[RMDB]
Source: RMDB library VIROID, as collected in RNAgym. Structure probing data (2A3) for a 207-nucleotide construct. The reactions ran in a buffer of 150 mM KOAc, 10 mM MgCl2 and 150 mM bicine (pH 8.5), at 24 C.
RNA sequence: GGGAACGACUCGAGUAGAGUCGAAAACGGACCGGCUCAUCUCGACAAGAGGCGGCAGUCCUCAGUACUCUUACUCUUUUCUGUAAAGAGGAGACUGCUGGACCCGCCGCCCAAGUUCGAGCAUGGGCCCAGUUCCGAGCGAAGGGAUCGCGGGGGGGAGAUACCACUUGUUCGCAAGUGGUAUCUCAAAAGAAACAACAACAACAAC
Reactivity to 2A3 in 0.01 (KOAc 150mM, MgCl2 10mM, bicine 150mM(pH8.5), 24C), signal-to-noise 2, nucleotides 027 to 156: c000g000g010a020c030c020g010g000c000u010c010a010u010c000u000c010g000a030c040a060a110g110a190g020g000c020g000g010c010a010g000u000c000c000u010c000a050g000u160a300c020u020c020u100u150a250c010u020c000u120u220u110u010c190u300g220u300a050a010a020g000a000g030g010a000g010a010c000u010g110c060u020g010g000a000c030c030c150g010c000c000g000c010c000c000a040a020g020u060u010c010g000a000g000c030a010u000g000g000g000c000c000c000a010g010u060u020c000c010g020a040g000c050g080a110a030g130g030g040a110u100c040g010c080g000g020g000g010g010g050